[RMDB]
Record summary:
Structure probing data (2A3 and DMS) for a 177-nucleotide construct.
RNA sequence: GGGAACGACUCGAGUAGAGUCGAAAAUCCCAAAGCGGAUUUAGCUCGGUUGGGAGAGCCCCAGACCGAAGAUCUGGACGUCCUGUGUUCGAUCCACAGAAUUCGCACCAUAAACAACGGGAGAUUCCCAUCAUUAAAUGUUCGCAUUUAAUGAUGGAAAAGAAACAACAACAACAAC
Reactivity to 2A3 in 0.01 (KOAc 150mM, MgCl2 10mM, bicine 150mM(pH8.5), 24C), signal-to-noise 9, nucleotides 027 to 126: u010c010c000c000a040a040a000g010c010g000g010a010u000u030u060a040g020c020u000c010g010g010u020u020g030g010g000a300g030a140g130c000c000c010c000a050g130a080c000c020g040a050a020g020a050u060c050u140g010g030a040c010g070u080c010c020u080g020u010g020u060u080c030g020a050u010c010c010a040c010a060g030a010a020u010u010c010g000c020a060c030c010a060u210a130a150a040c080a070a020c050g030g020g000a090g010a050u080u050c010
Reactivity to DMS in 0.01 (KOAc 150mM, MgCl2 10mM, bicine 150mM(pH8.5), 24C), signal-to-noise 6, nucleotides 027 to 126: u000c010c000c010a060a110a100g010c010g000g010a000u000u010u010a080g000c120u000c000g000g020u000u010g010g000g010a260g020a150g040c210c020c000c010a040g000a030c000c010g000a050a080g000a070u000c030u020g020g010a060c070g010u020c120c040u010g010u010g000u000u020c100g000a100u020c090c110a050c100a100g010a030a020u000u000c000g000c010a150c130c140a090u040a050a080a090c100a100a120c070g000g000g010a130g010a180u030u020c060
Values cover nucleotides 27 to 126.